[RMDB]
RNA sequence: GGGAACGACUCGAGUAGAGUCGAAAACGAACAGUUUGGCCGAGGCGGCGUGGGCGGCGUCGAGUUCGCCGCGUUCGUGGGCGGCCAGGGCACGGUCGACGACGGCUUCGAUCGCGUCGACCUCGGAUCCCUGGCGUACUUUCGAGUACGCCAGGGAAAAAGAAACAACAACAACAAC
Reactivity to DMS in 0.01 (KOAc 150mM, MgCl2 10mM, bicine 150mM(pH8.5), 24C), signal-to-noise 1, nucleotides 027 to 126: c030g000a070a190c250a180g000u020u010u020g000g040c060c000g000a100g040g030c000g000g000c030g000u000g020g020g030c050g000g000c030g000u010c180g000a130g110u000u000c060g030c010c000g000c000g000u000u040c000g010u000g010g000g040c090g000g010c010c030a010g000g010g000c130a110c170g030g040u000c020g010a000c010g020a160c010g030g000c020u050u020c280g000a060u000c010g030c000g020u000c000g000a040c000c000u010c060g000g000a130
Reactivity to 2A3 in 0.01 (KOAc 150mM, MgCl2 10mM, bicine 150mM(pH8.5), 24C), signal-to-noise 1, nucleotides 027 to 126: c000g050a070a000c040a060g030u150u200u100g000g000c040c010g020a030g060g000c000g010g030c060g000u160g090g100g060c020g020g070c030g000u180c090g110a090g110u050u120c020g010c000c000g020c010g020u130u110c050g000u080g000g180g000c040g030g000c010c000a000g000g010g070c070a030c110g000g040u020c000g010a020c000g070a210c020g010g050c010u210u190c150g300a300u040c000g000c000g000u000c010g130a100c010c020u040c010g020g010a010